[RMDB]
RNA sequence: GGGAACGACUCGAGUAGAGUCGAAAAGUAAGAUGAUUCGUCAUCUUACGAACCCGAUGAAGCGGCACAUACCGAGCUUCAAACAUCUAAGAGUGCAAAUAAUGGCGCGUGGUUUCGACCACGCGAAUGCGAACGAAAAGUUCGCUUUUCGUUCGCAAAAAGAAACAACAACAACAAC
Reactivity to 2A3 in 0.01 (KOAc 150mM, MgCl2 10mM, bicine 150mM(pH8.5), 24C), signal-to-noise 2, nucleotides 027 to 126: g000u020a010a010g010a020u010g010a010u070u020c080g020u000c080a000u020c010u000u020a000c000g000a010a040c000c000c010g000a050u110g020a010a000g040c050g070g030c050a020c020a140u200a090c040c110g060a010g020c000u020u010c010a080a050a000c070a040u020c040u140a100a000g090a000g100u050g080c040a100a010a040u230a030a060u190g210g000c000g000c000g030u000g000g000u040u100u100c200g040a020c000c000a000c030g010c000g000a000a000
Reactivity to DMS in 0.01 (KOAc 150mM, MgCl2 10mM, bicine 150mM(pH8.5), 24C), signal-to-noise 2, nucleotides 027 to 126: g010u000a000a020g010a020u000g010a010u000u020c190g000u010c000a000u000c000u000u000a000c000g010a060a120c010c000c000g010a130u010g000a020a010g030c000g020g020c060a070c080a110u010a130c060c130g000a130g000c010u000u000c030a110a170a090c130a060u000c090u010a060a080g000a140g050u000g000c070a060a090a110u030a070a100u010g010g020c010g020c000g040u000g000g010u000u000u010c160g000a030c000c000a000c000g000c000g000a010a040